Chemical mapping of a 177-nucleotide RNA with DMS and 2A3. 2A3 adducts were read by reverse transcription with SuperScript II with manganese. It was measured as part of the RMDB library OK2TRN. For DMS, 2,084 sequencing reads were counted. Conditions: 150 mM KOAc, 10 mM MgCl2 and 150 mM bicine (pH 8.5), 24 C.
RNA sequence: GGGAACGACUCGAGUAGAGUCGAAAAUGCGCGCCGCUAUGCGCGCGCGCGCUAUAUAGCGGCGUAUCGCAUACGCAUACGCGCGUAUUAUGCGCGCAUAUAUUAUAUACGCUAUGCGCGCAUAGCGCGCGCGCUACCUAUUCGUAGGUAGCGCGCGAAAAGAAACAACAACAACAAC
Reactivity to DMS in 0.01 (KOAc 150mM, MgCl2 10mM, bicine 150mM(pH8.5), 24C), signal-to-noise 3, nucleotides 027 to 126: u010g040c030g090c090g120c110c140g030c060u000a020u000g010c110g090c170g040c200g040c290g020c010g030c130u000a070u000a100u000a020g030c050g000g000c000g020u010a020u010c120g000c010a300u000a060c140g010c040a110u000a070c100g010c000g000c000g020u000a040u000u000a030u000g000c000g010c000g020c010a010u000a010u010a090u010u010a080u030a140u000a060c150g000c160u010a030u000g010c020g000c030g010c000a010u000a000g000c100g030
Reactivity to 2A3 in 0.01 (KOAc 150mM, MgCl2 10mM, bicine 150mM(pH8.5), 24C), signal-to-noise 2, nucleotides 027 to 126: u060g000c040g010c010g020c070c050g000c110u060a030u100g030c000g030c020g000c000g000c060g000c000g000c000u060a110u000a030u060a300g030c040g020g010c020g010u020a070u190c080g000c030a050u060a190c140g010c040a020u060a170c040g000c040g000c020g030u000a130u100u120a000u060g040c050g000c000g010c020a000u030a010u010a000u090u200a140u060a040u030a170c060g000c060u000a010u050g000c020g080c000g000c000a000u000a000g030c000g030